This 177-nucleotide RNA was probed chemically with DMS and 2A3. 2A3 adducts were read by reverse transcription with SuperScript II with manganese.
RNA sequence: GGGAACGACUCGAGUAGAGUCGAAAAUCGGGUGUAUUGGGUUUGGGGGAUAGUGAUUGAAUUGAGGGUUUUGCCGAUGCUAUCGGGGAUUUGAAAGCAUUCCAAACUCGGGCGUACCCUCGAGGUAGUAUAUUAAUAUUUUCGAAUAUUAAUAUACAAAAGAAACAACAACAACAAC
Reactivity to DMS in 0.01 (KOAc 150mM, MgCl2 10mM, bicine 150mM(pH8.5), 24C), signal-to-noise 1, nucleotides 027 to 126: u030c100g000g000g020u000g010u060a070u020u010g020g000g000u000u010u010g000g000g010g020g000a070u000a060g010u000g010a070u010u000g020a080a080u000u040g010a010g000g000g020u000u040u040u040g020c020c000g000a020u020g000c030u000a040u000c040g020g000g000g000a040u010u000u030g000a110a060a070g030c040a010u000u010c040c060a090a120a080c090u010c050g000g020g030c000g010u010a020c000c040c000u000c000g010a030g000g000u010a040
Reactivity to 2A3 in 0.01 (KOAc 150mM, MgCl2 10mM, bicine 150mM(pH8.5), 24C), signal-to-noise 2, nucleotides 027 to 126: u050c010g000g080g050u140g000u040a090u040u110g000g000g060u090u100u080g070g000g010g000g030a050u060a050g090u040g070a130u090u070g050a110a060u010u050g000a000g000g010g000u000u010u050u180g000c010c000g030a020u070g060c010u060a040u160c020g000g000g030g030a050u010u010u110g050a030a000a000g020c010a010u030u040c000c000a030a050a060c010u000c000g040g070g000c000g000u010a000c000c000c010u000c000g000a000g020g000u000a030

Source: RMDB library OK1LIB, as collected in RNAgym.
The DMS profile rests on 2,735 reads.
The RNA was probed in 150 mM KOAc, 10 mM MgCl2 and 150 mM bicine (pH 8.5) at 24 C.